[RMDB]
RNA sequence: GGGAACGACUCGAGUAGAGUCGAAAAGAGGUGCGUCCCAGUCCGGGUAGUACCGUUGGAUCGCCAGGGCGAUGGGACUAAUCGCACUCACAGUCCCGCUCGCAUUCCGGCUCGCCAGCGCAGUCACACUGGCAGACCUUGAUCUGGCAGGAGCACCCACCAACUUUGAAUUCGUUCAAAGUUGGUGAAAAGAAACAACAACAACAAC
Reactivity to DMS in 0.01 (KOAc 150mM, MgCl2 10mM, bicine 150mM(pH8.5), 24C), signal-to-noise 2, nucleotides 027 to 156: g010a180g000g000u000g000c020g060u000c010c000c020a210g000u000c020c030g020g000g000u010a110g010u000a050c050c050g010u000u010g020g010a110u000c040g040c020c000a120g050g020g030c000g010a050u030g020g010g010a050c040u000a070a040u020c040g030c170a060c000u000c080a180c110a070g000u000c000c000c020g000c110u000c020g020c020a230u010u010c090c040g000g000c000u000c090g020c000c000a030g030c010g040c070a220g020u000c160a300c050a080c000u000g000g040c020a080g030a010c010c010u010u000g010a050u020c010u000g010g000c020a070g010g030a190g010c010a050c030c030
Reactivity to 2A3 in 0.01 (KOAc 150mM, MgCl2 10mM, bicine 150mM(pH8.5), 24C), signal-to-noise 4, nucleotides 027 to 156: g090a040g000g020u030g010c040g100u080c020c020c010a000g070u060c060c050g030g010g020u070a110g050u090a120c010c020g010u030u050g020g010a080u100c080g000c030c060a120g020g040g000c020g010a030u020g000g000g000a000c020u040a050a090u160c120g020c150a080c050u120c050a090c040a010g000u000c000c010c000g000c100u020c010g000c020a030u170u090c030c020g000g000c000u030c050g020c000c000a010g000c010g000c070a030g050u060c020a020c010a020c130u070g070g010c020a050g040a080c010c030u060u130g060a130u110c010u010g020g030c030a040g000g060a030g020c010a000c000c010
Structure probing data (DMS and 2A3) for a 207-nucleotide construct. The 2A3 profile rests on 4,278 reads. DMS adducts were read by reverse transcription with MarathonRT. 2A3 adducts were read by reverse transcription with SuperScript II with manganese. The RNA was probed in 150 mM KOAc, 10 mM MgCl2 and 150 mM bicine (pH 8.5) at 24 C.